[RMDB]
RNA sequence: GGGAACGACUCGAGUAGAGUCGAAAACGGCACCGGCGCUACGGCAUCGACGACGAUCCGCGCUGCCCCAACAAGCACGGCUAUGACGCGAUCGACGGCCGCAAGGUCAUGGUGUCGCUCAUCGUCGACCGGGUCGACGAGCUGCAGGGCGACACCGUGGUAACAUGCCUUUCGAGGCAUGUUACCAAAAAGAAACAACAACAACAAC
Reactivity to 2A3 in 0.01 (KOAc 150mM, MgCl2 10mM, bicine 150mM(pH8.5), 24C), signal-to-noise 1, nucleotides 027 to 156: c030g080g000c030a070c100c010g070g000c010g000c080u040a010c040g030g000c010a070u140c010g110a090c050g010a000c030g030a130u000c030c020g050c000g050c010u060g000c000c030c010c020a040a100c080a050a110g000c080a040c020g000g000c000u070a020u300g070a050c010g030c000g040a120u000c000g070a050c050g060g020c000c000g000c030a080a000g020g020u100c010a060u060g020g000u000g000u000c000g000c000u020c000a020u000c000g020u000c000g050a010c030c190g240g000g000u000c000g000a000c000g040a040g050c110u250g000c080a070g000g000g030c010g020a000c000a000c000c000g030

This 207-nucleotide RNA was probed chemically with 2A3. The data come from the RNA Mapping Database (RMDB), library OK3TST.